[RMDB]
RNA sequence: GGGAACGACUCGAGUAGAGUCGAAAAGAAGUGGCAGGGACAUGCCCCAGAAGCUCGUUCUAGCAACAUAUGUUUGGCUAGUUCGAGCGAUUAGUCUGGAGGAGCGUCCUCUCGCCUCUUUACGAGAAGUCAUAAUCGUGUUCGCACGAUUAUGACUAAAAGAAACAACAACAACAAC
Reactivity to DMS in 0.01 (KOAc 150mM, MgCl2 10mM, bicine 150mM(pH8.5), 24C), signal-to-noise 2, nucleotides 027 to 126: g030a010a020g030u010g000g040c010a130g040g000g030a000c000a110u010g000c060c040c000c000a000g000a060a140g020c000u010c020g000u000u000c000u000a000g000c000a030a050c040a200u070a120u020g010u010u020u010g000g020c020u000a000g000u000u000c000g010a000g000c020g000a030u030u010a110g000u000c000u000g010g030a120g010g020a080g020c070g010u010c000c020u020c020u030c210g010c020c000u000c000u000u000u000a070c100g000a130g000a220
Reactivity to 2A3 in 0.01 (KOAc 150mM, MgCl2 10mM, bicine 150mM(pH8.5), 24C), signal-to-noise 5, nucleotides 027 to 126: g050a010a010g020u020g020g000c000a000g000g000g010a000c010a040u230g120c000c000c020c000a000g000a050a010g000c000u010c000g010u000u000c000u020a010g020c020a020a050c010a080u300a080u300g150u120u120u140g170g050c000u000a000g000u000u010c000g000a000g000c000g000a000u000u040a070g050u020c000u000g070g000a190g060g020a080g080c050g000u000c000c000u010c000u030c070g010c000c000u010c000u000u020u050a060c060g030a020g050a230
Chemical mapping of a 177-nucleotide RNA with DMS and 2A3. It was measured as part of the RMDB library OK1LIB. The RNA was probed in 150 mM KOAc, 10 mM MgCl2 and 150 mM bicine (pH 8.5) at 24 C. For DMS the reverse transcriptase was MarathonRT.